[RMDB]
RNA sequence: GGGAACGACUCGAGUAGAGUCGAAAAGAUAUGGAUCGCAUGUAAUAUGAUUCCACCCGAUAAGAGGCAGUCGGAAACGACUGGCCUCUUUUGACGGGUUAAAUCAUAUUACAUGCGAUCCUAAGUCCUACCUAUUGUACUUCGGUACAAUAGGUAGAAAAGAAACAACAACAACAAC
Reactivity to DMS in 0.01 (KOAc 150mM, MgCl2 10mM, bicine 150mM(pH8.5), 24C), signal-to-noise 4, nucleotides 027 to 126: g000a110u010a280u010g000g010a010u000c000g020c000a010u000g000u000a000a010u000a000u000g010a030u000u000c140c300a050c000c000c000g020a190u010a010a010g000a010g010g010c000a030g010u000c000g010g000a130a110a230c000g000a020c010u000g020g030c000c000u000c000u000u000u000u010g020a220c150g010g000g010u000u000a040a010a000u000c000a010u000a010u000u000a000c000a000u000g010c000g010a000u000c000c000u000a000a090g000u000c040
Chemical mapping of a 177-nucleotide RNA with DMS. Conditions: 150 mM KOAc, 10 mM MgCl2 and 150 mM bicine (pH 8.5), 24 C.